Notes
An RNA of 207 nucleotides, treated with DMS and 2A3 and read out base by base. The reactions ran in a buffer of 150 mM KOAc, 10 mM MgCl2 and 150 mM bicine (pH 8.5), at 24 C. DMS adducts were read by reverse transcription with MarathonRT. The DMS profile rests on 2,003 reads.

[RMDB]
RNA sequence: GGGAACGACUCGAGUAGAGUCGAAAAACGAAACCCAAGGUGCAUGCCGAGGUGCGGUAGGCCUCGUUAACAAACCGCAAAAAAAUAGUCGCACACGACGAAAACUACGCACUCGCAGCUUAAUAACAGUAGGGUCCCUACUUCGGUAGGGACCCAAACAUUAGCUAAACUUCGGUUUAGCUAAUGUAAAAGAAACAACAACAACAAC
Reactivity to DMS in 0.01 (KOAc 150mM, MgCl2 10mM, bicine 150mM(pH8.5), 24C), signal-to-noise 1, nucleotides 027 to 156: a240c060g000a060a070a150c010c020c010a080a180g000g040u000g040c090a060u000g050c070c010g030a060g040g020u000g010c020g020g000u010a080g000g000c010c010u000c060g010u020u000a140a190c070a110a020a080c020c040g050c030a000a000a040a090a140a100a170u010a070g000u000c040g020c040a040c180a090c060g080a030c040g000a030a010a050a060c030u000a010c000g000c000a050c030u010c040g080c100a030g020c020u000u000a050a140u010a100a060c080a120g000u000a150g000g030g030u020c000c010c000u000a010c030u000u000c190g080g000u000a000g010g000g000a000c000c000c000a000a010
Reactivity to 2A3 in 0.01 (KOAc 150mM, MgCl2 10mM, bicine 150mM(pH8.5), 24C), signal-to-noise 2, nucleotides 027 to 156: a010c080g010a100a000a000c000c000c000a020a060g080g050u060g000c050a060u060g050c130c050g030a040g000g030u010g010c050g070g020u020a020g060g000c000c020u020c020g150u070u030a050a020c060a030a080a020c010c030g000c010a130a060a000a000a000a000a060u160a060g020u040c030g000c030a060c030a030c180g080a000c000g010a050a040a000a000c010u080a010c030g020c040a000c020u040c030g030c000a010g030c020u070u080a220a040u180a200a130c060a060g110u220a130g030g000g000u020c000c000c000u010a010c040u010u050c120g050g000u010a000g000g000g000a030c000c000c000a000a000